[RMDB]
RNA sequence: GGGAACGACUCGAGUAGAGUCGAAAAUCACUUCUUCGGAAGUGAAAAAUUUGGCUCUGAAAUCUUGCUGUGUCAAUUCAAUUCCAGCAAGUUCCAGAGCCUUUUGAAAGAGGGGCUUCGGCCCCUCCGAUUCACUUAUCUUCGGAUAAGUGAAUCGAAAAGAAACAACAACAACAAC
Reactivity to DMS in 0.01 (KOAc 150mM, MgCl2 10mM, bicine 150mM(pH8.5), 24C), signal-to-noise 1, nucleotides 027 to 126: u000c000a000c010u000u000c000u000u020c180g020g020a000a010g040u010g000a010a060a050a180a140u010u000u020g030g000c010u010c000u000g000a010a010a010u010c020u000u000g020c000u000g020u020g020u020c260a040a130u020u000c210a100a150u020u000c090c010a010g000c000a010a030g010u000u000c040c000a000g000a010g000c000c000u000u000u010u000g010a120a110a120g010a010g000g000g030g000c000u010u020c280g030g010c000c000c000c000u010c000
Reactivity to 2A3 in 0.01 (KOAc 150mM, MgCl2 10mM, bicine 150mM(pH8.5), 24C), signal-to-noise 2, nucleotides 027 to 126: u000c000a010c020u000u000c000u050u040c190g170g020a000a000g000u030g050a120a050a000a000a000u070u080u150g010g000c020u000c010u000g040a050a060a100u060c010u060u010g010c000u020g080u100g120u300c040a010a060u260u110c040a040a170u240u160c070c000a000g000c000a000a000g000u020u000c020c000a000g010a000g000c000c000u040u020u040u000g010a000a010a000g010a000g030g000g000g020c000u050u080c210g120g000c030c050c010c000u000c000